[RMDB]
RNA sequence: GGGAACGACUCGAGUAGAGUCGAAAAGAAAUCGGCAGCAGUUCGGUGUCGGGGUCGACGCGAACCAGCCGGGGUUCGGCGUCGCCGGCCGCGGCGAUGUGCUCGGCGUAGCCGGGAUGGUCGGUCGCCCCGCGUGACGUUUCGACGUCACGCGGGGAAAAGAAACAACAACAACAAC
Reactivity to 2A3 in 0.01 (KOAc 150mM, MgCl2 10mM, bicine 150mM(pH8.5), 24C), signal-to-noise 1, nucleotides 027 to 126: g140a020a190a010u080c050g000g030c000a000g000c030a070g130u100u030c040g000g100u090g060u130c000g020g000g040g090u170c040g000a020c000g000c000g040a020a060c030c030a020g030c020c000g080g080g000g000u160u210c050g130g010c010g050u140c100g040c000c000g010g000c000c000g060c030g150g040c060g000a010u110g070u140g140c000u000c010g040g030c060g080u010a010g000c000c000g000g020g000a070u110g020g010u030c010g020g030u060c020g060
An RNA of 177 nucleotides, treated with 2A3 and read out base by base.
For 2A3 the reverse transcriptase was SuperScript II with manganese.
For 2A3, 468 sequencing reads were counted.
Reactivities are given for positions 27 through 126.